[RMDB]
RNA sequence: GGGAACGACUCGAGUAGAGUCGAAAAUGAGUCUACCAUGUGAAUCCCUUUCAGAACCUCCGGAUUCUUGUAAACUUUUUGAAAGGUUGAAUCAACCAGGAAAAGACCUUUACUAAGCCUUGCUAAAACACUGCCACUGCUUUUUUGUAGUGGCUCACCCUUUUAUCGGUUUCGACCGAUAAAAGGGAAAAGAAACAACAACAACAAC
Reactivity to 2A3 in 0.01 (KOAc 150mM, MgCl2 10mM, bicine 150mM(pH8.5), 24C), signal-to-noise 2, nucleotides 027 to 156: u130g010a030g010u070c010u040a040c050c030a060u060g030u020g090a080a030u040c060c000c000u000u070u090c090a070g000a080a030c040c040u090c090c070g060g020a120u120u060c030u040u060g030u040a040a040a250c060u050u110u010u080u140g100a050a030a000g020g030u030u080g070a080a040u110c050a000a150c010c050a050g050g000a000a110a060a050g020a000c000c000u050u060u050a100c060u050a040a010g040c030c030u150u130g040c070u070a030a050a080a070c120a060c070u070g020c000c000a000c010u020g010c000u000u150u140u000u160u300g000u000a030g000u000g000g030c000u000c000a010
The data come from the RNA Mapping Database (RMDB), library OK3TST. Structure probing data (2A3) for a 207-nucleotide construct. 2A3 is a SHAPE reagent: it acylates the 2'-hydroxyl of flexible nucleotides of all four kinds. Values cover nucleotides 27 to 156. The RNA was probed in 150 mM KOAc, 10 mM MgCl2 and 150 mM bicine (pH 8.5) at 24 C. For 2A3, 601 sequencing reads were counted.